[RMDB]
RNA sequence: GGGAACGACUCGAGUAGAGUCGAAAAGUCGCCGCAUCUACAUCAACGCCCAGCGCGGGCGAGGGAGGCGUCCUACGGGGGUGACCCAUUCGCCGGCAUGGUAGAGGACGGCAAGAUUGCCGCGACGGAUGGCGUAUCGAUUCGUCGAUACGCCAUCAAAAGAAACAACAACAACAAC
Reactivity to 2A3 in 0.01 (KOAc 150mM, MgCl2 10mM, bicine 150mM(pH8.5), 24C), signal-to-noise 2, nucleotides 027 to 126: g010u010c010g000c010c030g000c000a000u030c020u020a040c010a120u060c010a030a050c020g020c000c040c000a060g080c300g000c110g160g000g030c040g000a020g050g050g010a170g020g000c020g020u040c000c000u050a160c150g130g000g010g080g050u110g160a220c030c000c030a060u060u070c010g010c010c000g040g070c070a060u100g050g000u060a070g040a040g120g030a020c020g010g030c010a010a010g010a020u110u190g000c000c000g000c010g020a020c020g040
Reactivity to DMS in 0.01 (KOAc 150mM, MgCl2 10mM, bicine 150mM(pH8.5), 24C), signal-to-noise 2, nucleotides 027 to 126: g010u010c030g000c010c250g050c030a090u000c000u000a090c090a140u000c010a140a090c030g030c080c000c000a150g000c170g030c150g020g000g050c000g000a020g020g020g000a160g000g020c030g000u000c000c000u000a100c160g040g000g000g000g010u000g000a120c010c000c010a180u000u000c040g000c010c000g010g030c060a070u000g000g000u010a180g000a090g030g000a050c040g020g010c090a120a020g000a060u000u000g030c000c220g000c010g000a040c070g030